[RMDB]
RNA sequence: GGGAACGACUCGAGUAGAGUCGAAAAGUGAAAGCUCCUUCUCUCGCAAUGUGUAACUCAUGAUUCUCAUGACCCCUGGUUGGAGAAAUCCGGACUAGGAGCCAGGGGGCCUCUGAUUCUGCCAGCCAAAACUGUCGUAAGUUCGCUUACGACAGAAGUCACGAUGUAUCUUCGGAUACAUCGUGACAAAAGAAACAACAACAACAAC
Reactivity to 2A3 in 0.01 (KOAc 150mM, MgCl2 10mM, bicine 150mM(pH8.5), 24C), signal-to-noise 1, nucleotides 027 to 156: g100u100g080a100a040a050g020c010u060c020c030u010u030c060u020c020u010c010g050c060a090a180u070g080u030g050u090a080a020c010u000c030a040u070g050a140u280u000c110u030c100a020u060g020a050c000c000c000c020u020g010g040u040u070g070g030a100g000a180a000a010u010c000c010g050g060a040c030u070a080g030g030a010g030c000c000a000g010g000g010g000g000c000c000u000c020u050g040a140u100u000c010u110g000c020c000a000g000c010c000a100a140a060a060c020u000g000u000c000g000u000a000a000g000u070u130c200g020c100u010u000a000c000g010a010c000a000g000a000a000